Source: RMDB libraries RFM100 and RFMREP, as collected in RNAgym. The record gives the reactivity of an RNA of 177 nucleotides to 2A3 and DMS. For DMS the reverse transcriptase was MarathonRT. For 2A3, 1,254 sequencing reads were counted. The RNA was probed in 150 mM KOAc, 10 mM MgCl2 and 150 mM bicine (pH 8.5) at 24 C.
RNA sequence: GGGAACGACUCGAGUAGAGUCGAAAAUCAUAUCUAUCCUUGUUUCUAAACCAGUCUCAUAGAUAUGAAGGCUUUGUUUCUGAUGAAGGAUUGUGGGAUUGUUGCUUAACACUGAUGAGCAUAUUAUUAAAUUUUAGAUAUUCGUAUCUAAAAUUUAAAAAGAAACAACAACAACAAC
Reactivity to 2A3 in 0.01 (KOAc 150mM, MgCl2 10mM, bicine 150mM(pH8.5), 24C), signal-to-noise 3, nucleotides 027 to 126: u020c010a020u040a030u030c010u010a010u010c020c000u000u020g030u050u060u020c070u120a060a010a010c000c000a020g020u020c020u010c100a000u030a050g030a040u080a010u050g020a030a030g040g020c020u070u070u120g010u030u050u010c040u050g090a090u090g020a030a040g000g000a020u050u090g010u080g030g040g050a070u020u080g060u050u040g000c010u040u060a080a020c050a050c110u160g050a220u070g030a190g010c030a040u070a090u300u000a060u070
Reactivity to DMS in 0.01 (KOAc 150mM, MgCl2 10mM, bicine 150mM(pH8.5), 24C), signal-to-noise 3, nucleotides 027 to 126: u010c020a030u010a010u000c020u000a010u020c040c010u000u000g000u000u000u010c030u020a040a060a070c170c250a060g010u000c000u010c040a040u000a080g000a030u010a020u000g000a030a070g010g000c030u000u030u030g000u000u000u020c070u010g010a070u010g010a040a050g010g000a020u010u000g010u020g010g020g010a080u010u000g000u000u000g010c030u010u010a070a100c110a090c210u030g010a080u020g010a010g010c010a040u040a110u040u050a220u010